[RMDB]
RNA sequence: GGGAACGACUCGAGUAGAGUCGAAAAAUCAUCACUGCCGAAGAGGAAGUUCUGGUCAACGCCGCCAACAGCAACGGUAGACCCGGUGACGGUGUGUGUGGUGCGCUCUACGGCGCGUUUGGGGACGCGACGGACCACCAUUCGUGGUGGUCCGUCGAAAAGAAACAACAACAACAAC
Reactivity to DMS in 0.01 (KOAc 150mM, MgCl2 10mM, bicine 150mM(pH8.5), 24C), signal-to-noise 2, nucleotides 027 to 126: a070u010c060a050u000c010a080c030u000g030c000c010g010a120a090g050a060g000g000a080a080g030u000u000c090u000g010g000u000c100a170a120c090g000c000c000g000c020c080a110a100c150a140g010c090a070a070c010g020g000u010a110g000a140c100c020c060g000g020u010g000a050c050g000g010u000g020u000g020u010g010u010g060g000u010g000c060g000c050u010c030u000a110c070g000g010c040g060c040g000u000u000u000g040g000g020g030a090c150g000